[RMDB]
Chemical mapping of a 207-nucleotide RNA with 2A3. For 2A3, 718 sequencing reads were counted. For 2A3 the reverse transcriptase was SuperScript II with manganese.
RNA sequence: GGGAACGACUCGAGUAGAGUCGAAAAGUAACAAUAGCUUGUAACCCAUGUGGGGACAUUAAGAUGGUGGGACACUGGUUCGGUUCCUCGGAUCGGUUCUGAUGUGGGCAUGUUUCUGAGCUGCCCAGUCCAAGCUGUGAGUAAUUAGUGUUGAGUUAUAAAUGAAGGUGUUCGCACCUUCAUUUAUAAAAGAAACAACAACAACAAC
Reactivity to 2A3 in 0.01 (KOAc 150mM, MgCl2 10mM, bicine 150mM(pH8.5), 24C), signal-to-noise 2, nucleotides 027 to 156: g070u060a020a020c050a010a090u060a040g010c020u090u040g040u180a080a080c000c050c030a080u160g110u110g050g040g020g060a010c030a060u100u130a120a060g070a130u130g050g030u030g000g020g010a000c010a010c080u020g030g030u000u000c040g010g040u110u060c030c030u040c020g000g010a000u000c010g000g030u040u040c090u060g020a020u000g020u120g130g020g020c000a010u100g140u020u110u090c130u140g050a020g010c000u000g010c030c010c000a000g000u040c000c010a000a020g040c000u010g010u050g040a000g060u130a150a210u130u140a110g030u030g000u060u050g030a080g020u030u010

About this RNA
Conditions: 150 mM KOAc, 10 mM MgCl2 and 150 mM bicine (pH 8.5), 24 C.